[RMDB]
RNA sequence: GGGAACGACUCGAGUAGAGUCGAAAAGAAAGUAGCGAAAGAAAGGCUCUUACUACGGGAACAUACGAAAGAAGUAUGCCGGUAAGGAAGAUAGGCCGCCGUAGAACUGAGCUACGAAAAAGAAAAAGGGAUAUGAUGUCUUCGGACAUCAUGUCCCAAAAGAAACAACAACAACAAC
Reactivity to 2A3 in 0.01 (KOAc 150mM, MgCl2 10mM, bicine 150mM(pH8.5), 24C), signal-to-noise 8, nucleotides 027 to 126: g150a000a090a000g020u040a010g010c050g080a180a050a050g070a030a110a040g040g000c020u020c010u070u040a030c010u040a050c050g050g010g030a190a030c000a000u000a000c000g100a170a060a240g130a170a020g040u010a000u010g040c000c020g030g000u050a040a020g050g040a060a020g040a110u170a040g140g050c030c020g000c040c030g080u100a040g020a120a020c060u050g020a010g000c000u010a010c010g040a010a050a010a000a010g220a010a050a010a010a000
Reactivity to DMS in 0.01 (KOAc 150mM, MgCl2 10mM, bicine 150mM(pH8.5), 24C), signal-to-noise 7, nucleotides 027 to 126: g020a140a110a140g010u000a000g010c010g020a110a100a020g020a110a080a110g000g020c010u000c010u000u010a090c020u010a040c030g010g010g010a100a300c000a000u010a000c010g000a080a130a120g000a130a170g000u010a000u000g000c050c000g000g000u000a080a040g000g010a040a040g020a120u040a060g010g000c030c030g010c120c110g020u030a090g010a100a120c060u020g000a300g000c010u000a000c010g030a060a060a040a110a070g000a040a070a070a090a100